[RMDB]
An RNA of 177 nucleotides, treated with DMS and 2A3 and read out base by base. The reactions ran in a buffer of 150 mM KOAc, 10 mM MgCl2 and 150 mM bicine (pH 8.5), at 24 C. Source: RMDB library M2PK50, as collected in RNAgym. DMS adducts were read by reverse transcription with MarathonRT. For DMS, 28,533 sequencing reads were counted. The 2A3 profile rests on 34,908 reads.

RNA sequence: GGGAACGACUCGAGUAGAGUCGAAAAACGCGAGGAUUCGUCCUCGCGUACAUAAGUGAGUUCGCCGGAUAGCUGCCAAAGUGAGUUCGCCGGAUAGCUGCCAAGCACAUAGUUUCGACUAUGUGAACACUAAUUGAUUAUUCGUAAUCAAUUAGUGAAAAGAAACAACAACAACAAC
Reactivity to DMS in 0.01 (KOAc 150mM, MgCl2 10mM, bicine 150mM(pH8.5), 24C), signal-to-noise 9, nucleotides 027 to 126: a010c000g010c000g010a010g010g000a030u000u020c200g010u000c000c000u000c000g010c010g010u000a000c110a070u010a080a070g010u000g010a120g010u000u000c040g020c140c010g010g010a050u010a230g000c020u000g010c100c100a060a100a080g010u000g000a090g010u000u000c050g020c130c020g010g000a050u000a160g010c030u000g010c040c040a100a130g010c020a010c000a000u000a000g010u000u000u010c190g010a040c000u000a000u000g010u000g000a080a160
Reactivity to 2A3 in 0.01 (KOAc 150mM, MgCl2 10mM, bicine 150mM(pH8.5), 24C), signal-to-noise 9, nucleotides 027 to 126: a000c000g000c000g000a000g010g010a020u050u050c170g060u030c070c000u000c000g000c000g000u010a000c000a070u230a050a060g070u040g150a060g020u030u040c030g010c020c000g000g010a040u050a030g000c040u090g100c080c060a230a180a050g080u100g080a050g030u030u040c020g000c020c000g020g000a030u050a010g000c010u070g070c020c010a050a020g080c000a000c000a000u010a010g010u030u090u090c200g070a010c000u000a000u000g000u010g030a040a000